[RMDB]
RNA sequence: GGGAACGACUCGAGUAGAGUCGAAAAUAGCCGGAGUUCCCCUCCUGGACUGUGUGGCCAUGGGGGAUGUUGAGAGGUAUAGCCUUGAGGCACAGGAGUUGAUCGGAAGACCAUUCGCAUGGAGGAGCCCUUCCCAGUAGUUCGCUACUGGGAAGGGAAAAGAAACAACAACAACAAC
Reactivity to DMS in 0.01 (KOAc 150mM, MgCl2 10mM, bicine 150mM(pH8.5), 24C), signal-to-noise 1, nucleotides 027 to 126: u000a140g030c020c050g030g010a140g010u000u010c040c000c010c080u000c010c000u010g000g010a040c060u020g020u020g010u000g030g020c040c030a020u000g010g010g000g010g000a050u020g010u000u000g010a210g010a030g010g020u000a080u000a100g010c020c030u000u010g010a210g030g000c000a150c080a080g010g000a040g010u000u020g030a040u010c050g030g010a020a030g010a090c050c030a090u000u000c070g000c120a060u010g000g040a030g000g010a050g000
Record summary:
Chemical mapping of a 177-nucleotide RNA with DMS. For DMS the reverse transcriptase was MarathonRT. Values cover nucleotides 27 to 126.